This 177-nucleotide RNA was probed chemically with DMS and 2A3. DMS adducts were read by reverse transcription with MarathonRT.
RNA sequence: GGGAACGACUCGAGUAGAGUCGAAAACAGGUGAACCAUUGACUACAGUGAUAUUGGGAAUGACAUACGCAAUGAGAGGGUUGGGGAAAGCCUUCAUAGGGGCCACCUAAUGUUCUGCCACUAGCACCAACCGUGCAAUGUUCGCAUUGCACGGUUGAAAAGAAACAACAACAACAAC
Reactivity to DMS in 0.01 (KOAc 150mM, MgCl2 10mM, bicine 150mM(pH8.5), 24C), signal-to-noise 2, nucleotides 027 to 126: c110a080g010g000u010g020a060a120c060c000a120u000u000g000a150c070u000a060c140a000g050u000g020a030u030a100u000u000g010g000g030a090a060u020g010a080c080a040u000a060c130g010c120a070a040u000g000a080g020a080g000g000g010u000u020g000g020g010g010a080a060a260g030c020c020u000u000c120a120u020a120g020g010g020g030c030c070a070c070c030u010a100a070u000g000u000u000c020u000g000c080c000a020c080u000a090g020c060a050c240
Reactivity to 2A3 in 0.01 (KOAc 150mM, MgCl2 10mM, bicine 150mM(pH8.5), 24C), signal-to-noise 1, nucleotides 027 to 126: c070a020g020g050u020g060a020a030c030c010a000u010u150g060a100c040u110a090c100a040g000u030g100a090u020a050u190u140g000g000g140a070a070u070g020a030c010a060u070a030c000g050c060a060a120u060g000a030g050a000g120g040g060u090u160g040g050g000g010a070a150a020g000c020c000u050u070c040a040u050a060g010g030g050g000c010c000a040c010c020u030a070a030u100g000u070u000c030u040g000c030c000a070c000u010a010g010c020a010c010